Structure probing data (2A3 and DMS) for a 207-nucleotide construct. For DMS, 18,294 sequencing reads were counted. Conditions: 150 mM KOAc, 10 mM MgCl2 and 150 mM bicine (pH 8.5), 24 C. Source: RMDB library OK3TST, as collected in RNAgym. Values cover nucleotides 27 to 156. For 2A3, 10,395 sequencing reads were counted. For DMS the reverse transcriptase was MarathonRT.

[RMDB]
RNA sequence: GGGAACGACUCGAGUAGAGUCGAAAAUGUUGCCGAUUUCGCUGCCAUGGACUGGCAGAAGAUGAUGCAGGGUCUCGUUGCCAUGGGUAUGGUGCUUGGUGGCUUGGCAGUAUUUAGCAACCUCGUCAAUCCUGGUCAGAUGAUUUCUAUGGGUGUACAUAUUAAGUUACUUCGGUAACUUAAUAUGAAAAGAAACAACAACAACAAC
Reactivity to 2A3 in 0.01 (KOAc 150mM, MgCl2 10mM, bicine 150mM(pH8.5), 24C), signal-to-noise 7, nucleotides 027 to 156: u100g010u020u030g030c030c040g040a110u040u100u090c060g000c010u020g000c010c010a080u150g070g060a100c060u030g010g000c020a000g010a010a030g030a030u140g010a030u040g040c050a060g050g000g040u020c040u020c060g070u080u050g000c030c040a070u080g020g000g050u140a110u110g050g000u050g020c020u050u050g060g020u030g030g000c010u010u030g030g000c010a020g030u080a110u060u110u040a040g000c020a020a060c000c020u040c020g050u020c030a010a060u040c010c010u030g010g020u040c020a010g020a070u050g020a040u060u070u020c060u100a080u100g030g000g020u050g010u030a030
Reactivity to DMS in 0.01 (KOAc 150mM, MgCl2 10mM, bicine 150mM(pH8.5), 24C), signal-to-noise 4, nucleotides 027 to 156: u010g020u000u010g020c010c040g010a230u010u000u000c050g020c030u000g020c000c010a090u020g010g000a250c150u010g010g010c010a050g000a050a060g010a100u000g020a110u000g010c040a100g000g020g030u000c040u000c070g020u000u000g010c020c040a100u000g010g030g030u000a080u010g010g050u000g030c020u000u010g020g030u000g020g010c050u010u000g010g000c030a100g010u000a070u000u000u000a120g020c040a060a070c020c020u000c050g010u000c050a050a120u000c010c000u000g020g020u000c050a090g000a090u000g000a110u000u000u000c040u000a100u000g030g000g010u010g010u000a200